[RMDB]
Structure probing data (DMS and 2A3) for a 177-nucleotide construct. The RNA was probed in 150 mM KOAc, 10 mM MgCl2 and 150 mM bicine (pH 8.5) at 24 C. For DMS, 2,543 sequencing reads were counted. It was measured as part of the RMDB library OK2TRN.
RNA sequence: GGGAACGACUCGAGUAGAGUCGAAAAGUGGUUAUCAAGUACUGUUUGAAGGUACUGUAAUUGAUAAUGCAAGUACUGUCAAAGAAGCACGUAAUAAAAUUGCAAAGAUAAAACGUGAUGCAAAGCAUCGUCUCUCCAAAUUCGUUUGGAGAGACGAAAAAGAAACAACAACAACAAC
Reactivity to DMS in 0.01 (KOAc 150mM, MgCl2 10mM, bicine 150mM(pH8.5), 24C), signal-to-noise 3, nucleotides 027 to 126: g040u000g010g010u010u000a040u010c020a060a060g000u010a010c010u000g010u000u010u000g010a240a190g020g030u000a030c000u010g010u020a070a060u000u000g010a070u010a040a030u000g000c050a120a130g010u000a050c050u010g010u000c080a090a100a110g000a110a090g000c000a020c040g000u000a070a100u010a050a090a100a140u000u000g010c120a060a090a100g010a080u000a070a040a100a060c040g000u000g000a080u000g000c120a050a080a130g010c100a120
Reactivity to 2A3 in 0.01 (KOAc 150mM, MgCl2 10mM, bicine 150mM(pH8.5), 24C), signal-to-noise 2, nucleotides 027 to 126: g050u040g050g040u020u030a050u040c000a010a040g000u040a020c010u050g150u250u170u080g160a170a070g110g010u010a010c000u040g030u040a060a030u030u060g010a020u010a130a020u090g160c040a020a050g040u030a070c020u050g070u130c070a140a000a070g020a090a000g050c030a000c110g040u040a100a040u040a100a220a050a040u130u130g000c070a150a160a020g050a080u100a080a120a030a000c060g020u050g040a010u020g000c020a090a030a080g060c020a060